[RMDB]
RNA sequence: GGGAACGACUCGAGUAGAGUCGAAAAGCAAAAUAAGCGAGAAAACGUAGGAGCAGCCAAUGAACACAAAAUUGUCCUAUGGAGACCAGAUGAUCGCAAAAACCACCAUAAAAAUAACCGCACUUUCGAGUGCGGAAAAGAAACAACAACAACAAC
Reactivity to 2A3 in 0.01 (KOAc 150mM, MgCl2 10mM, bicine 150mM(pH8.5), 24C), signal-to-noise 2, nucleotides 027 to 135: g020c040a030a020a060a300u200a230a050g010c010g010a020g020a010a170a000a010c000g000u000a000g000g000a060g000c060a000g000c000c000a070a150u300g260a300a000c050a010c050a160a110a030a030u060u060g010u020c000c000u000a000u010g020g000a090g060a050c000c040a010g020a090u100g020a000u040c020g010c010a030a000a000a060a060c030c010a030c020c000a040u170a090a080a010a000a000u130a050a010c000c000g000c000a000c010u000u050u100c130g040a020g020u000g010c000g010g000a020
Structure probing data (2A3) for a 155-nucleotide construct. For 2A3 the reverse transcriptase was SuperScript II with manganese. The RNA was probed in 150 mM KOAc, 10 mM MgCl2 and 150 mM bicine (pH 8.5) at 24 C.